[RMDB]
RNA sequence: GGGAACGACUCGAGUAGAGUCGAAAAUAAAAAGAUCGAAAGAUCAAAAGGCGUACAUGUUGUCGACCUUCACGUGGUGUGCGCUGUCAACUCACUGCUGUCAGGUUAACAGACAACAAAAAAAAAAGAGAACUAUUCGAUUCGUCGAAUAGUUCUCAAAAGAAACAACAACAACAAC
Reactivity to DMS in 0.01 (KOAc 150mM, MgCl2 10mM, bicine 150mM(pH8.5), 24C), signal-to-noise 1, nucleotides 027 to 126: u000a180a010a080a110a130g030a020u010c000g000a100a040a140g000a000u000c000a040a030a070a050g000g000c060g000u010a000c100a130u010g000u000u000g000u000c010g000a030c020c020u000u020c160a090c260g030u010g000g030u010g000u000g000c010g000c010u010g030u000c100a050a060c000u000c190a070c130u000g000c050u000g010u000c070a070g000g000u000u000a080a030c030a060g020a070c000a020a010c020a000a010a000a000a000a000a000a060a300a230
Structure probing data (DMS) for a 177-nucleotide construct. The data come from the RNA Mapping Database (RMDB), library M2PK90. Conditions: 150 mM KOAc, 10 mM MgCl2 and 150 mM bicine (pH 8.5), 24 C. The DMS profile rests on 642 reads.